RNA sequence: GGGAACGACUCGAGUAGAGUCGAAAAGGCAGGACUUACCAAGACUGGGGGCCGAUGAGGGUUGGCUCAAAGUAGGGUUUUGACUUGAAAACUCAAGCUGUGACCCCAAAACGAUGGAGGUAAAUGAAAAAUCCAUCUGCCUUCGGGCAGAUGGAAAUCAUACACUUAAGUUCGCUUAAGUGUAUGAAAAAGAAACAACAACAACAAC
Reactivity to DMS in 0.01 (KOAc 150mM, MgCl2 10mM, bicine 150mM(pH8.5), 24C), signal-to-noise 3, nucleotides 027 to 156: g010g020c020a080g000g010a110c050u000u000a090c040c030a080a130g010a090c040u010g000g020g010g040g040c050c080g010a060u000g010a100g010g010g030u000u000g020g020c060u010c030a050a050a090g030u000a080g010g020g040u000u010u000u000g000a050c040u000u010g000a060a080a120a120c130u010c010a030a060g000c000u020g020u010g010a120c000c010c000c030a040a050a100a100c060g000a080u000g000g010a040g050g020u010a040a060a070u010g010a020a040a050a080a140u000c010c000a020u000c000u000g020c000c000u000u000c300g070g030g030c010a020g020a020u000g000g000a000a000a030
Reactivity to 2A3 in 0.01 (KOAc 150mM, MgCl2 10mM, bicine 150mM(pH8.5), 24C), signal-to-noise 4, nucleotides 027 to 156: g050g000c020a010g020g020a050c020u050u060a060c060c030a080a030g070a040c100u070g000g000g000g040g030c010c050g040a040u070g030a070g010g030g020u050u070g040g000c020u030c050a060a080a020g060u090a060g040g020g000u010u040u160u060g050a070c010u020u050g030a110a060a060a050c060u020c020a010a010g000c010u040g060u110g090a050c000c000c010c010a000a130a010a020c060g050a040u070g010g030a040g020g000u070a060a080a080u150g070a080a060a020a010a010u010c000c000a000u000c000u000g000c000c000u020u030c120g040g000g000c000a000g000a010u000g010g000a000a000a000